[RMDB]
Chemical mapping of a 207-nucleotide RNA with 2A3 and DMS. The data come from the RNA Mapping Database (RMDB), library OK3TST.
RNA sequence: GGGAACGACUCGAGUAGAGUCGAAAACUGCCUGCCCAGCAACGGCAGAGGGGAGUUCCAAUUACAUUCACAUUUAAGGGGAAUGAGCAUGUGGGUCUCAGCAGAGGCCAUUUUAGGAUAGCUGGCCUUUUGGAAAGCCAUGAACUGGUGAAAGGCGACAUGUCGAUCAAUUCGUUGAUCGACAUGUAAAAGAAACAACAACAACAAC
Reactivity to 2A3 in 0.01 (KOAc 150mM, MgCl2 10mM, bicine 150mM(pH8.5), 24C), signal-to-noise 3, nucleotides 027 to 156: c040u040g000c010c000u010g050c010c010c020a060g010c040a050a080c040g010g000c020a010g040a080g130g000g000g020a030g010u090u030c030c000a030a060u130u110a040c040a060u040u040c050a050c050a120u090u150u220a140a070g060g060g020g010a030a050u080g010a040g050c080a060u080g010u050g120g010g010u000c020u030c030a120g010c060a040g040a010g000g020c030c000a020u060u090u060u130a040g040g030a030u070a100g060c040u020g020g090c000c000u090u050u030u010g060g020a170a040a020g020c010c010a020u120g050a110a050c040u020g020g000u110g080a220a080a010g000g010c010g000
Reactivity to DMS in 0.01 (KOAc 150mM, MgCl2 10mM, bicine 150mM(pH8.5), 24C), signal-to-noise 2, nucleotides 027 to 156: c020u000g030c030c010u000g050c010c020c000a210g020c030a100a120c100g000g010c030a050g000a130g000g100g040g010a160g000u000u000c020c020a060a140u000u010a120c010a080u000u010c050a070c040a140u000u000u000a090a160g010g020g000g000a020a060u000g000a170g000c060a050u000g010u000g040g020g020u010c040u000c060a150g000c130a130g000a040g010g010c000c000a000u000u000u000u020a120g050g000a170u000a070g020c120u040g020g020c010c020u000u000u000u000g040g000a110a100a160g010c020c020a110u010g000a110a140c020u000g000g000u000g000a070a030a070g040g060c010g020